[RMDB]
RNA sequence: GGGAACGACUCGAGUAGAGUCGAAAAUUCGAUAAAGCCGAACCCAUCGAAAGAUGGGGACGGGAAACCACAAGUUUCAGAUAGUUUCGUUGAUUCAAGCUCCUAGUUUUUUUGGCGCUUCCUUAAGCUAAUAAACGAUUUUCGAAUCGUUUAUUAGAAAAGAAACAACAACAACAAC
Reactivity to DMS in 0.01 (KOAc 150mM, MgCl2 10mM, bicine 150mM(pH8.5), 24C), signal-to-noise 7, nucleotides 027 to 126: u010u010c040g010a070u010a080a100a180g020c000c000g010a040a300c010c000c000a010u000c000g010a110a100a160g010a010u000g000g000g000g000a070c010g000g010g000a010a030a040c020c050a120c240a130a280g000u000u010u000c040a130g010a110u020a080g010u000u000u000c130g010u000u000g000a090u010u000c100a050a080g000c040u000c010c020u000a080g000u000u010u010u010u020u020u010g010g010c090g010c050u000u000c040c010u010u010a070a120g000
Reactivity to 2A3 in 0.01 (KOAc 150mM, MgCl2 10mM, bicine 150mM(pH8.5), 24C), signal-to-noise 6, nucleotides 027 to 126: u070u030c010g020a010u050a150a120a020g110c000c000g000a010a010c000c010c010a000u000c000g070a120a050a060g000a000u000g000g000g000g020a000c000g000g000g010a030a010a010c040c030a060c020a150a070g010u010u050u040c070a080g040a170u130a120g080u020u070u060c070g020u060u120g050a160u090u100c060a020a010g000c000u010c010c000u060a150g080u040u120u120u020u000u060u140g040g020c030g000c000u020u050c010c000u050u090a080a030g020
Structure probing data (DMS and 2A3) for a 177-nucleotide construct.
The RNA was probed in 150 mM KOAc, 10 mM MgCl2 and 150 mM bicine (pH 8.5) at 24 C.
Values are in units of 0.01, from 0 to 300, in steps of 10.
2A3 is a SHAPE reagent: it acylates the 2'-hydroxyl of flexible nucleotides of all four kinds.
For DMS the reverse transcriptase was MarathonRT.